[RMDB]
RNA sequence: GGGAACGACUCGAGUAGAGUCGAAAAAGGAAUUGCACCAAGUAAUAAAACUAUCGUACCUCAUAGGUCAGUUUUUGCAACGGCAUGCCCACAAGCUAUGGACGUACCAGCGUAUAUUGAUAAGGUUAAGCAAUAUUACAAUGGCACACAAAAAAAACAGACCUAAAGCUUUCGAGCUUUAGGUCUGAAAAGAAACAACAACAACAAC
Reactivity to 2A3 in 0.01 (KOAc 150mM, MgCl2 10mM, bicine 150mM(pH8.5), 24C), signal-to-noise 1, nucleotides 027 to 156: a040g050g000a020a020u110u050g010c040a040c130c030a050a060g080u070a010a240u090a120a040a010a000c030u050a060u280c050g170u120a000c000c000u080c040a130u050a100g060g000u000c060a080g000u000u090u000u000u040g000c030a030a010c000g030g000c040a010u010g020c000c010c000a220c030a060a040g000c010u090a010u140g000g080a060c040g000u000a010c010c020a000g030c020g000u020a020u000a000u020u040g010a040u020a230a060g150g170u210u040a300a020g000c000a000a030u000a070u030u030a060c030a000a070u050g000g030c090a010c000a000c020a030a030a000a070a050a100a080a020

This 207-nucleotide RNA was probed chemically with 2A3. Values cover nucleotides 27 to 156. The 2A3 profile rests on 420 reads. The data come from the RNA Mapping Database (RMDB), library OK3TST. Conditions: 150 mM KOAc, 10 mM MgCl2 and 150 mM bicine (pH 8.5), 24 C.